This 177-nucleotide RNA was probed chemically with DMS and 2A3. As a SHAPE reagent, 2A3 marks flexible, mostly unpaired nucleotides at the ribose 2'-OH. It was measured as part of the RMDB library M2PK90. Reactivities are given for positions 27 through 126.
RNA sequence: GGGAACGACUCGAGUAGAGUCGAAAAGGGUUUGGAUUACAUCAAUAGUAACAUGAGCACAAGUAAACAGAACAAGAAGUACUGCGGUUAUUCAAGUUCAAAGUUCACACUAUCGCAAUAAAGGGAAGACUUUUAGGGUAUUCGUACCCUAAAAGUCAAAAGAAACAACAACAACAAC
Reactivity to DMS in 0.01 (KOAc 150mM, MgCl2 10mM, bicine 150mM(pH8.5), 24C), signal-to-noise 3, nucleotides 027 to 126: g000g000g000u000u000u010g010g000a160u000u010a030c050a120u010c070a100a100u010a070g010u010a050a070c070a030u000g000a050g010c030a060c120a030a080g010u000a050a020a120c040a110g030a030a020c020a050a210g000a030a040g000u000a040c050u000g030c120g020g000u010u000a070u000u000c000a030a290g000u000u010c030a030a040a080g000u010u010c040a030c100a070c110u020a070u000c060g000c070a070a040u000a040a030a090g000g000g000a110a080
Reactivity to 2A3 in 0.01 (KOAc 150mM, MgCl2 10mM, bicine 150mM(pH8.5), 24C), signal-to-noise 2, nucleotides 027 to 126: g070g000g050u090u100u060g060g010a080u110u060a050c000a070u070c010a010a160u080a090g080u060a050a000c040a070u070g040a020g000c010a020c040a120a030g050u090a110a130a010c030a070g010a050a000c010a040a030g060a060a000g040u000a020c010u020g030c010g080g040u030u000a020u070u070c020a030a040g020u000u010c000a060a030a040g010u070u040c040a030c000a000c050u100a070u230c040g020c090a000a110u090a190a040a020g050g000g050a070a100